[RMDB]
RNA sequence: GGGAACGACUCGAGUAGAGUCGAAAAGAAGAUUAUGACUAUAUGCACCAUCGAUGUGCAUGCCCGGGAUGUGGUAGCCAAGAUGAUUGCUCAGAAGGUGGGUCCCAAACAUCCAGGGAUGCCCACUUUUGUGUACAGCUACACUGAGAACAGCACAAUAAAUCCUAGGAUUCGUCCUAGGAUUUAUAAAAGAAACAACAACAACAAC
Reactivity to DMS in 0.01 (KOAc 150mM, MgCl2 10mM, bicine 150mM(pH8.5), 24C), signal-to-noise 2, nucleotides 027 to 156: g030a100a070g000a130u000u010a120u010g000a090c050u010a080u000a080u010g010c010a010c020c050a300u000c210g020a140u000g050u020g000c000a050u000g000c080c020c020g030g000g040a040u000g040u010g000g010u000a040g000c020c010a060a180g010a120u000g020a110u000u000g020c030u000c050a110g010a050a090g000g000u010g000g070g000u000c000c010c000a030a040a070c090a070u010c080c050a180g000g010g010a040u010g060c020c010c000a030c010u000u010u000u010g020u000g020u000a110c070a130g010c050u000a070c060a140c070u000g000a140g000a040a090c060a110g030c040a080c060a100
Reactivity to 2A3 in 0.01 (KOAc 150mM, MgCl2 10mM, bicine 150mM(pH8.5), 24C), signal-to-noise 2, nucleotides 027 to 156: g070a000a000g060a050u090u140a060u300g040a010c040u100a070u050a020u260g000c000a010c020c040a160u230c090g060a140u180g010u020g010c000a010u000g010c000c020c030g020g000g000a030u100g010u090g070g070u060a010g020c040c070a070a020g040a040u090g000a020u060u240g040c000u000c030a000g010a080a010g110g050u020g000g000g000u000c000c010c050a030a230a040c070a100u090c040c050a000g040g000g000a060u280g030c010c000c000a000c000u020u000u000u000g030u010g000u000a030c020a010g000c000u010a020c010a010c070u020g010a010g050a140a070c020a050g060c070a020c000a070
Chemical mapping of a 207-nucleotide RNA with DMS and 2A3. Conditions: 150 mM KOAc, 10 mM MgCl2 and 150 mM bicine (pH 8.5), 24 C. It was measured as part of the RMDB library OK3TST. For 2A3 the reverse transcriptase was SuperScript II with manganese.